[RMDB]
RNA sequence: GGGAACGACUCGAGUAGAGUCGAAAACACUAGCUUUCGAAGCUGUACCUGAGAGUCAAAGCUCACGAUUUGACAGCAAACAAAGCUAGUGAAUGCUGCGACUCAGGGAUACCUAGCAGAGCUAGAAGAUAUAGAUUUAUUUCGAUAGGUCUAUAUCAAAAGAAACAACAACAACAAC
Reactivity to DMS in 0.01 (KOAc 150mM, MgCl2 10mM, bicine 150mM(pH8.5), 24C), signal-to-noise 9, nucleotides 027 to 126: c050a170c010u000a000g000c000u000u000u030c040g010a250a130g000c040u010g010u000a040c070c050u010g000a120g000a030g000u010c120a070a300a110g000c000u000c010a020c090g000a150u020u030u030g000a080c100a050g020c110a050a120a190c300a020a030a030g010c030u010a060g000u010g000a040a050u040g000c010u010g010c300g010a040c030u000c030a300g000g010g010a090u010a050c050c040u010a070g020c050a240g000a050g010c010u000a020g000a120a100
Reactivity to 2A3 in 0.01 (KOAc 150mM, MgCl2 10mM, bicine 150mM(pH8.5), 24C), signal-to-noise 9, nucleotides 027 to 126: c020a000c000u000a000g000c010u060u070u090c090g160a180a020g000c010u020g010u030a050c000c020u110g030a110g010a010g270u110c070a070a030a020g020c000u000c010a020c040g070a060u080u040u170g100a070c050a020g040c010a050a090a060c030a040a070a010g020c020u020a010g000u000g000a010a010u110g000c010u020g010c010g030a020c010u010c050a020g030g010g010a070u060a100c000c020u010a020g000c020a020g010a010g040c010u030a020g020a100a010